[RMDB]
RNA sequence: GGGAACGACUCGAGUAGAGUCGAAAAGAAAGCUCCUCAUCCGUGUGGAGGAGAAUGGCUAUAACCACAGAAACCUGAGGAAACAGGAAGCCACAACGCAAGCCAUGUGGUUAGCACACGGAAGAAACGUGCCGUAUGAUUUCGAUCAUACGGCACGAAAAGAAACAACAACAACAAC
Reactivity to DMS in 0.01 (KOAc 150mM, MgCl2 10mM, bicine 150mM(pH8.5), 24C), signal-to-noise 2, nucleotides 027 to 126: g020a040a090a150g000c000u010c000c010u030c000a060u000c050c020g020u000g000u010g000g000a020g010g000a060g000a090a070u050g000g080c010u030a110u060a080a220c010c000a000c040a010g000a060a070a060c020c000u000g000a150g010g010a060a020a130c000a000g000g020a140a080g020c000c000a040c090a080a150c070g000c170a040a040g030c110c070a130u000g030u000g000g000u000u010a040g040c010a030c010a000c000g000g000a170a160g000a070a050a060
Reactivity to 2A3 in 0.01 (KOAc 150mM, MgCl2 10mM, bicine 150mM(pH8.5), 24C), signal-to-noise 3, nucleotides 027 to 126: g090a020a150a000g000c010u000c000c000u000c010a050u060c000c000g000u010g000u020g010g000a030g000g030a030g030a030a040u110g020g010c040u040a000u120a200a050c030c000a040c000a090g130a100a090a050c020c010u030g010a040g010g280a150a070a030c000a000g000g000a000a000g010c010c020a020c010a060a070c170g180c130a110a020g050c080c000a010u030g010u020g000g000u000u050a030g010c000a000c000a000c000g010g000a000a020g050a010a090a020
Annotation: The data come from the RNA Mapping Database (RMDB), library OK1LIB. Structure probing data (DMS and 2A3) for a 177-nucleotide construct. Values cover nucleotides 27 to 126. The DMS profile rests on 2,060 reads.